RNA sequence: GGGAACGACUCGAGUAGAGUCGAAAACCCGGAAGGGAGCAGCCGUGCCUGGACGCCAGCGUUCGCUGGUCAACAGCCAGAGUGAAACUGGGGUAAACCUAUAGAUAGGUAGGCCAUGGGGUAGGGGAAAUAGCUUUAUGUUCGCAUAAAGCUAUUUAAAAGAAACAACAACAACAAC
Reactivity to 2A3 in 0.01 (KOAc 150mM, MgCl2 10mM, bicine 150mM(pH8.5), 24C), signal-to-noise 9, nucleotides 027 to 126: c000c000c000g010g030a080a060g020g000g020a080g020c040a000g030c040c040g080u080g020c020c000u020g000g030a020c050g050c010c000a010g010c030g130u160u160c120g000c020u000g000g010u050c040a070a080c010a040g020c000c010a020g040a020g040u150g020a100a040a060c030u020g010g000g030g010u070a120a090a050c010c010u060a050u030a100g240a100u100a030g020g060u020a020g070g000c020c030a070u120g020g000g000g030u080a060g000g010g000g010
Reactivity to DMS in 0.01 (KOAc 150mM, MgCl2 10mM, bicine 150mM(pH8.5), 24C), signal-to-noise 9, nucleotides 027 to 126: c000c000c000g010g010a140a060g000g000g000a100g000c090a100g010c050c050g010u010g010c070c020u000g010g000a150c250g000c010c010a010g010c040g010u020u020c120g010c000u000g000g000u000c090a080a180c230a140g000c020c020a030g010a110g010u020g000a050a120a140c040u000g000g000g000g010u010a060a130a090c020c010u000a100u020a120g010a140u020a030g010g010u000a080g010g000c040c070a080u010g000g000g000g000u010a080g000g000g000g000
An RNA of 177 nucleotides, treated with 2A3 and DMS and read out base by base.
Source: RMDB libraries RFM100 and RFMREP, as collected in RNAgym.
Values are in units of 0.01, from 0 to 300, in steps of 10.
Values cover nucleotides 27 to 126.